[RMDB]
RNA sequence: GGGAACGACUCGAGUAGAGUCGAAAAGAAAACCGCAGUUGGCUAGCGGAAAGAAAGAGGGUUAAAGCCAACGAAAUAAGUCGGAAAGCACGACCGACAAGAAAAGCCCUACAAUCGUGUAAGAAAACGAUAGCCUAGGGUUCGCCCUAGGCUAUCGAAAAGAAACAACAACAACAAC
Reactivity to 2A3 in 0.01 (KOAc 150mM, MgCl2 10mM, bicine 150mM(pH8.5), 24C), signal-to-noise 2, nucleotides 027 to 126: g000a000a050a000a000c010c000g000c020a000g000u000u000g000g000c010u050a090g040c000g070g040a070a050a000g190a070a090a010g060a010g000g020g010u030u110a060a000a000g010c020c040a000a000c000g040a000a000a180u260a120a060g000u000c000g000g000a210a110a000g090c010a000c020g010a000c010c000g000a000c000a000a010g040a010a020a000a000g010c000c000c000u040a100c090a090a070u020c080g000u000g030u000a070a080g140a120a110a000a000
Reactivity to DMS in 0.01 (KOAc 150mM, MgCl2 10mM, bicine 150mM(pH8.5), 24C), signal-to-noise 1, nucleotides 027 to 126: g000a160a250a160a220c020c030g000c000a100g070u000u000g010g020c000u000a070g000c000g010g000a020a090a120g000a020a000a050g000a060g000g000g000u000u000a040a010a060g000c000c000a070a020c000g050a130a050a060u000a060a120g010u000c000g000g000a070a130a130g000c000a020c010g000a040c000c000g000a010c010a110a080g000a060a080a060a060g000c000c000c000u000a110c190a040a110u010c050g000u000g020u000a080a150g000a120a070a140a180